The data come from the RNA Mapping Database (RMDB), library OK2TST. This 177-nucleotide RNA was probed chemically with DMS. Reactivities are rounded to 0.1 and cut off at 0 and 3. DMS adducts were read by reverse transcription with MarathonRT.
[RMDB]
RNA sequence: GGGAACGACUCGAGUAGAGUCGAAAAGUAGUCGCCGAGGUUUGCGUUGCCCAAGUUGAGUGUGCCGUCGUUGGCGAAGCCGAAGUUGAAUAACGUCCCACCUGCGGCGUUGCGCAUGAAGCCGGCGUGCGGGUGAGUGAUUCGUCACUCACCCGCAAAAAGAAACAACAACAACAAC
Reactivity to DMS in 0.01 (KOAc 150mM, MgCl2 10mM, bicine 150mM(pH8.5), 24C), signal-to-noise 1, nucleotides 027 to 126: g050u010a080g030u020c020g000c050c030g010a150g010g020u000u000u040g010c080g000u000u000g000c010c030c000a130a130g000u000u020g000a200g000u010g010u000g000c040c010g000u000c050g010u020u010g020g010c010g000a110a140g010c060c060g010a020a090g030u000u010g010a110a110u020a050a100c070g010u000c030c040c000a100c090c040u000g000c030g000g010c050g010u020u010g000c040g030c030a040u020g010a140a120g000c010c020g000g020c000g040
The RNA was probed in 150 mM KOAc, 10 mM MgCl2 and 150 mM bicine (pH 8.5) at 24 C. Values cover nucleotides 27 to 126.